[RMDB]
RNA sequence: GGGAACGACUCGAGUAGAGUCGAAAAGAUAUGGACCCUUACGUGAGGAGCAACAGCGUUUGAUCGGAAACGAUCGGAACGACAUGCUCCUCAAGGGUCCUAAGUCAAAGGGUCGUUCGCGACCCAAUCGAGGAACUAUCUUCGGAUAGUUCCUCGAAAAAGAAACAACAACAACAAC
Reactivity to 2A3 in 0.01 (KOAc 150mM, MgCl2 10mM, bicine 150mM(pH8.5), 24C), signal-to-noise 1, nucleotides 027 to 126: g000a000u060a040u220g000g000a030c010c000c000u020u110a210c300g280u190g070a000g020g050a030g030c060a000a200c050a230g030c000g020u000u010u080g010a000u000c010g020g050a150a000a000c000g000a020u000c020g100g010a020a030c000g100a010c000a060u280g000c000u090c000c000u000c000a000a000g000g000g000u000c000c010u010a040a040g050u040c020a080a000a120g030g010g000u010c010g000u050u120c240g000c030g070a000c000c060c030a000a050
Reactivity to DMS in 0.01 (KOAc 150mM, MgCl2 10mM, bicine 150mM(pH8.5), 24C), signal-to-noise 1, nucleotides 027 to 126: g000a020u000a300u000g000g000a000c000c000c020u000u020a150c300g000u020g000a010g010g030a050g020c000a020a150c280a120g020c000g020u030u000u000g010a010u000c000g000g000a090a050a130c000g000a000u000c000g030g000a000a030c000g000a030c090a300u010g000c000u000c000c000u000c000a000a070g010g060g000u000c000c010u000a000a060g000u000c000a090a100a110g030g000g000u000c010g030u000u030c170g060c010g020a000c000c000c010a030a020